[RMDB]
RNA sequence: GGGAACGACUCGAGUAGAGUCGAAAAAUCACCGGUGGGGAACCCCAUACGGCAACGGCGUAGCAGUAAAUGCUAACCAAUCCGUGGUAUCUACGCGACGGAGCAUCCACGGAUAACUCUAACAAGGCUAAGCGUCUCGGUUUCGACCGAGACGCAAGAGAGAUAAAGGAUUCGUCCUUUAUCUCUCAAAAGAAACAACAACAACAAC
Reactivity to 2A3 in 0.01 (KOAc 150mM, MgCl2 10mM, bicine 150mM(pH8.5), 24C), signal-to-noise 2, nucleotides 027 to 156: a000u080c020a030c050c020g030g000u030g010g020g020g080a120a110c060c000c000c000a030u130a150c020g000g010c050a080a000c070g040g030c100g000u040a000g010c000a000g040u120a040a140a170u070g000c090u040a030a030c030c030a010a000u000c000c000g000u000g000g010u080a070u050c040u030a050c060g000c060g140a070c090g120g010a050g040c000a030u030c000c000a000c000g000g000a000u020a020a020c030u030c060u110a070a120c030a130a060g160g000c050u120a090a020g000c020g000u000c000u000c000g000g050u040u100u100c220g070a020c000c010g000a000g020a000c000g000c000a000a000
Structure probing data (2A3) for a 207-nucleotide construct. The RNA was probed in 150 mM KOAc, 10 mM MgCl2 and 150 mM bicine (pH 8.5) at 24 C. It was measured as part of the RMDB library M2RFPK. The 2A3 profile rests on 1,038 reads.